[RMDB]
RNA sequence: GGGAACGACUCGAGUAGAGUCGAAAAUUGCGUUAGUUAAACAUAUUCCAGUUACUAAUGACAACUAUCGGGAAUCAUGGGAUCGGCUGGAACAGCGAUAUAACAAACAAUCGCUAAUUAUUCGAUCGGUCAUUACCGCGUUCGCGCGGUAAUGACCAAAAGAAACAACAACAACAAC
Reactivity to 2A3 in 0.01 (KOAc 150mM, MgCl2 10mM, bicine 150mM(pH8.5), 24C), signal-to-noise 1, nucleotides 027 to 126: u000u030g120c000g000u000u000a000g040u070u300a130a070a030c220a160u160a280u200u150c030c030a000g000u000u030a000c000u000a000a000u090g160a120c080a080a050c040u070a000u210c050g030g000g180a180a100u050c050a050u080g070g000g060a070u000c000g000g000c010u040g000g000a180a120c100a000g000c000g000a000u000a030u090a000a200c120a160a000a000c000a000a000u000c000g010c000u000a000a000u030u150a010u010u010c040g000a000u000c010
The data come from the RNA Mapping Database (RMDB), library OK1LIB. An RNA of 177 nucleotides, treated with 2A3 and read out base by base. Reactivities are given for positions 27 through 126. The reactions ran in a buffer of 150 mM KOAc, 10 mM MgCl2 and 150 mM bicine (pH 8.5), at 24 C.